[RMDB]
RNA sequence: GGGAACGACUCGAGUAGAGUCGAAAAGAUAUGGACAUCCCAUGGAGCGAUCAUAUCGGAAACGAUAUGUCGCUAUGAAGUGGUGAUGUCCUAAGUCAAAAGAGCAACCUGUUCGCAGGUUGCUCAACUUUAAGCUAUGGUUCGCCAUAGCUUAAAGAAAAGAAACAACAACAACAAC
Reactivity to 2A3 in 0.01 (KOAc 150mM, MgCl2 10mM, bicine 150mM(pH8.5), 24C), signal-to-noise 6, nucleotides 027 to 126: g010a010u030a020u080g000g000a000c000a000u010c000c010c010a010u040g120g070a250g040c010g000a020u300c020a000u080a000u010c000g000g020a020a030a020c000g010a000u000a000u010g000u010c000g000c010u040a300u180g040a020a010g000u020g010g090u300g040a000u010g010u000c000c000u000a010a000g010u010c020a050a040a070a150g010a000g000c000a000a000c000c010u010g040u060u100c300g040c120a010g000g010u000u010g000c000u010c000a000a000
Reactivity to DMS in 0.01 (KOAc 150mM, MgCl2 10mM, bicine 150mM(pH8.5), 24C), signal-to-noise 6, nucleotides 027 to 126: g010a020u000a240u010g000g000a030c000a010u000c000c010c000a010u000g010g010a090g040c000g010a040u020c030a000u000a000u000c000g010g000a070a040a140c000g020a020u010a000u000g010u000c000g030c000u010a060u010g000a170a240g010u000g000g000u010g030a010u000g020u000c000c000u000a000a060g000u010c020a110a130a160a130g010a000g000c000a010a000c010c000u000g010u000u000c220g020c010a000g000g000u000u000g000c000u010c010a000a030

Notes
This 177-nucleotide RNA was probed chemically with 2A3 and DMS. The DMS profile rests on 13,071 reads. For 2A3 the reverse transcriptase was SuperScript II with manganese.